[RMDB]
RNA sequence: GGGAACGACUCGAGUAGAGUCGAAAAAGGUAACAAAAAGAGGUGCAAAUGUAUAUAUUACUAAACUAGAGAAGCCUCCUCCUGAAGGUUCUGGUAGUUGAUUGAUAAGUACGAACGAGAAGACCGAGGUAACCCUGAUAUUCGUAUCAGGGUUACCAAAAGAAACAACAACAACAAC
Reactivity to 2A3 in 0.01 (KOAc 150mM, MgCl2 10mM, bicine 150mM(pH8.5), 24C), signal-to-noise 2, nucleotides 027 to 126: a000g290g020u250a170a030c000a070a030a010a010a030g010a010g020g000u060g000c010a080a060a060u090g120u000a000u020a010u000a070u290u010a060c020u280a180a000a030c060u030a010g070a020g040a210a000g040c020c020u000c000c000u030c000c030u030g110a120a050g000g020u080u050c060u040g070g000u000a020g030u020u050g060a170u000u150g000a050u000a280a030g000u000a040c110g000a100a000c020g000a000g090a070a000g000a010c000c000g000a000
Reactivity to DMS in 0.01 (KOAc 150mM, MgCl2 10mM, bicine 150mM(pH8.5), 24C), signal-to-noise 2, nucleotides 027 to 126: a050g020g020u050a030a100c070a080a080a080a090a030g000a030g000g040u000g000c080a090a130a120u050g000u010a030u030a080u020a050u000u000a090c030u000a060a070a050c050u000a110g020a080g010a060a130g010c010c010u010c020c030u000c070c050u000g000a080a010g000g000u000u000c040u010g000g000u010a010g000u040u000g000a050u000u000g000a020u050a030a300g010u060a030c110g030a090a050c070g000a080g000a040a120g010a150c010c010g010a110